The record gives the reactivity of an RNA of 177 nucleotides to 2A3 and DMS. Conditions: 150 mM KOAc, 10 mM MgCl2 and 150 mM bicine (pH 8.5), 24 C. For DMS the reverse transcriptase was MarathonRT.

[RMDB]
RNA sequence: GGGAACGACUCGAGUAGAGUCGAAAACGAUCAGGUGCGACAGCCCUUGGAAGAAGUCGAUCGCGCCGGGCCAGGUCAGUGCCUCGCGCAGCGUCGGGGAUCGCACAGCGUUGAGACCGAAUAGCGCGUGCAACGAUCGAUUCGUCGAUCGUUGCACAAAAGAAACAACAACAACAAC
Reactivity to 2A3 in 0.01 (KOAc 150mM, MgCl2 10mM, bicine 150mM(pH8.5), 24C), signal-to-noise 1, nucleotides 027 to 126: c030g030a020u200c070a080g060g080u010g000c040g020a030c020a110g140c010c020c010u000u150g190g070a150a210g050a190a010g190u140c050g050a070u170c070g030c010g060c020c090g000g000g050c040c000a060g000g160u160c020a050g080u090g230c040c000u000c000g000c000g000c010a030g000c000g020u050c070g030g040g010g030a040u070c010g020c070a000c030a000g010c010g050u040u060g020a080g010a090c040c010g020a090a060u200a170g070c080g000c030
Reactivity to DMS in 0.01 (KOAc 150mM, MgCl2 10mM, bicine 150mM(pH8.5), 24C), signal-to-noise 1, nucleotides 027 to 126: c050g000a110u030c110a300g080g010u020g000c010g000a040c100a250g030c000c060c030u020u020g010g020a130a080g020a090a120g010u010c040g030a020u010c050g010c000g000c010c060g010g000g030c000c050a140g000g020u060c190a120g000u010g000c000c000u010c300g010c080g020c020a080g000c040g000u030c030g000g000g000g000a220u000c030g000c000a080c040a090g020c000g010u000u000g000a100g080a230c010c020g020a080a080u010a040g000c120g040c120